The record gives the reactivity of an RNA of 177 nucleotides to 2A3 and DMS. The RNA was probed in 150 mM KOAc, 10 mM MgCl2 and 150 mM bicine (pH 8.5) at 24 C. For DMS, 17,601 sequencing reads were counted.
[RMDB]
RNA sequence: GGGAACGACUCGAGUAGAGUCGAAAACGACAGACGUUCGCGUCUGUCGAAAUACCGAGGUUGUUCCUCGGUAAAUAACAACAACCCUUGGAAACAAGGGAAAAAGGAGAUGGUUCGCCAUCUCCAACAGUAAGAAUUAGUUCGCUAAUUCUUACUGAAAAGAAACAACAACAACAAC
Reactivity to 2A3 in 0.01 (KOAc 150mM, MgCl2 10mM, bicine 150mM(pH8.5), 24C), signal-to-noise 8, nucleotides 027 to 126: c010g000a000c000a000g000a000c000g020u060u070c210g030c010g110u010c000u000g000u000c000g000a000a000a000u040a000c000c000g000a010g030g030u170u180g090u300u300c000c000u000c000g000g000u000a000a000a010u020a000a000c050a010a010c020a020a110c000c000c000u000u000g010g020a040a030a020c000a000a000g000g000g030a050a020a020a020a020g000g000a000g000a000u010g010g030u040u070c150g010c070c000a010u000c000u000c000c000a000a000
Reactivity to DMS in 0.01 (KOAc 150mM, MgCl2 10mM, bicine 150mM(pH8.5), 24C), signal-to-noise 8, nucleotides 027 to 126: c010g000a010c000a010g010a000c000g030u000u010c210g020c010g030u000c000u000g000u000c000g000a010a070a120u000a020c000c000g010a010g000g000u010u010g010u000u020c000c000u000c010g000g000u000a000a030a060u010a100a080c110a070a100c180a100a150c000c000c000u010u010g000g000a150a110a190c000a010a010g010g000g010a000a010a070a120a060g000g000a010g000a010u000g000g010u000u010c250g010c010c000a010u000c000u000c000c000a020a030